[RMDB]
RNA sequence: GGGAACGACUCGAGUAGAGUCGAAAAGCGUACUACCGUCCUGCUCGAUGAAAGGCUCUACCCACCUGCUUCCCAAAUAGGAAGCAGAGGAGCCUGGAGAGCUGCGUAGGAUAGACGGUAUCGCAAACAUACAGGUAGAUUCGUCUACCUGUAUGAACCAUUGCGAAGACUUCGGUCUUCGCAAUGGAAAAGAAACAACAACAACAAC
Reactivity to 2A3 in 0.01 (KOAc 150mM, MgCl2 10mM, bicine 150mM(pH8.5), 24C), signal-to-noise 1, nucleotides 027 to 156: g000c000g060u090a040c070u030a020c010c000g000u010c000c020u040g000c000u000c010g300a300u060g010a070a070a010g000g000c000u000c010u040a200c090c020c010a060c030c010u010g020c000u020u010c000c000c000a100a290a020u080a030g000g000a000a000g030c000a000g000a000g000g020a000g020c010c000u000g000g010a020g000a030g000c000u020g020c070g130u110a110g010g180a050u090a100g020a000c010g000g030u030a040u300c010g000c020a090a000a000c000a000u000a010c000a010g000g000u000a000g000a020u050u050c220g020u000c180u000a000c020c000u000g060u000a000u000g000a000a000
Reactivity to DMS in 0.01 (KOAc 150mM, MgCl2 10mM, bicine 150mM(pH8.5), 24C), signal-to-noise 1, nucleotides 027 to 156: g040c010g000u000a020c090u010a000c000c010g020u010c000c030u000g000c000u000c000g000a300u000g000a260a150a060g000g010c030u000c000u010a030c000c000c000a300c230c000u000g000c000u020u000c000c000c000a080a150a160u000a050g000g000a020a020g000c000a030g000a120g000g000a000g000c000c030u000g010g020a180g000a010g000c030u010g060c020g040u000a150g130g000a130u000a050g020a020c000g020g000u020a000u000c000g010c030a070a070a300c010a020u000a000c040a010g040g010u000a050g000a030u040u010c300g000u000c010u000a010c000c000u000g000u010a000u000g040a140a180
Chemical mapping of a 207-nucleotide RNA with 2A3 and DMS. The RNA was probed in 150 mM KOAc, 10 mM MgCl2 and 150 mM bicine (pH 8.5) at 24 C. For 2A3 the reverse transcriptase was SuperScript II with manganese.